[RMDB]
RNA sequence: GGGAACGACUCGAGUAGAGUCGAAAAGGGAAUGGUGGUUUACCCCGUUAUCAAAUGAUGACCGACCAAUAAUUGGCGAAACUCGUUUCGCGUUGGCUGCCUAAUUCAAGGAAUUAGCGUGCCUUCAAAGACAUCAAGAAGUUCGCUUCUUGAUGAAUCUAAUCUACCCCUUCGGGGGUAGAUUAGAAAAAGAAACAACAACAACAAC
Reactivity to DMS in 0.01 (KOAc 150mM, MgCl2 10mM, bicine 150mM(pH8.5), 24C), signal-to-noise 2, nucleotides 027 to 156: g020g010g020a090a070u000g010g000u020g000g020u000u000u000a180c020c000c030c000g000u000u000a090u000c050a100a120a150u000g000a120u000g020a110c000c030g000a110c000c000a070a110u010a040a220u010u000g030g000c000g010a120a120a070c020u000c100g010u000u000u000c000g030c050g040u000u000g010g020c030u000g010c140c000u000a010a040u000u000c020a110a190g060g010a030a010u000u000a020g010c050g070u000g000c000c000u000u000c040a090a100a110g030a210c000a010u000c000a020a020g010a010a010g010u000u010c300g030c010u000u000c000u010u010g010a000u000g000a040a040
Reactivity to 2A3 in 0.01 (KOAc 150mM, MgCl2 10mM, bicine 150mM(pH8.5), 24C), signal-to-noise 3, nucleotides 027 to 156: g070g000g040a070a080u070g020g060u010g040g080u040u060u200a130c030c000c010c000g070u060u080a070u110c070a110a190a280u210g060a030u060g000a000c000c080g040a060c070c020a010a070u160a130a110u150u110g040g050c020g010a000a010a030c060u050c150g030u030u030u010c020g000c030g000u000u030g000g000c030u080g020c020c020u000a010a000u020u040c110a190a140g150g040a100a030u010u010a010g010c020g070u030g010c010c000u010u060c060a130a090a030g120a010c000a010u000c000a000a000g000a010a000g040u050u070c130g040c110u000u000c000u000u010g000a000u000g010a000a010